[RMDB]
RNA sequence: GGGAACGACUCGAGUAGAGUCGAAAAGCAUUGGGACCAGCGGCUACACUAGAAGAAAUGAUGACAGCAUGUCAGGGAGUAGGAGGACCCGGCCAUAAGGCAAGAGUUUUGGCUGAAGCAAUGAGCCAAGUAACAAAUUCAGCUACCAUAAUGAUGCCAGUACUUCCGAGUUCGCUCGGAAGUACUGAAAAGAAACAACAACAACAAC
Reactivity to 2A3 in 0.01 (KOAc 150mM, MgCl2 10mM, bicine 150mM(pH8.5), 24C), signal-to-noise 2, nucleotides 027 to 156: g040c030a050u050u110g050g000g020a020c020c040a030g010c010g000g000c030u120a040c070a110c090u090a020g020a150a010g020a110a190a080u130g000a020u040g020a060c060a060g060c030a030u100g010u050c080a040g010g000g000a070g050u080a030g010g030a030g000g000a010c000c000c000g000g000c050c000a110u100a200a000g020g000c000a030a030g060a040g050u050u080u150u140g000g010c000u010g000a040a000g090c020a000a110u130g000a000g000c030c000a010a040g040u040a090a010c090a140a060a000u090u020c000a020g000c020u030a030c000c020a090u060a220a030u220g060a020u030g040c000